[RMDB]
RNA sequence: GGGAACGACUCGAGUAGAGUCGAAAAGAUAAUGUCUUCGGACAUUAUCCACGCCUAAAGGCUUUAAUUAAUUAGCUAUGCCUGCUAAUUAAAAUGGCAUUAACAACUGUCCAUUCGUGGACAGUAACGCACCACGUGUAUUCGUACACGUGGUGCGAAAAGAAACAACAACAACAAC
Reactivity to 2A3 in 0.01 (KOAc 150mM, MgCl2 10mM, bicine 150mM(pH8.5), 24C), signal-to-noise 1, nucleotides 027 to 126: g000a000u020a000a000u010g010u000c000u020u060c190g020g010a000c010a000u020u000a010u000c020c000a010c080g030c000c000u110a230a080a000g130g000c000u100u100u080a100a050u090u040a000a040u000u020a010g000c030u040a050u230g170c030c100u010g020c030u020a030a010u000u040a010a030a020a040u080g000g020c050a030u090u140a100a010c100a020a040c010u010g000u070c030c010a010u020u060c230g210u040g010g000a010c000a000g000u010a010a000
Annotation:
Structure probing data (2A3) for a 177-nucleotide construct. As a SHAPE reagent, 2A3 marks flexible, mostly unpaired nucleotides at the ribose 2'-OH. The 2A3 profile rests on 986 reads. Source: RMDB library M2PK50, as collected in RNAgym. Values are in units of 0.01, from 0 to 300, in steps of 10.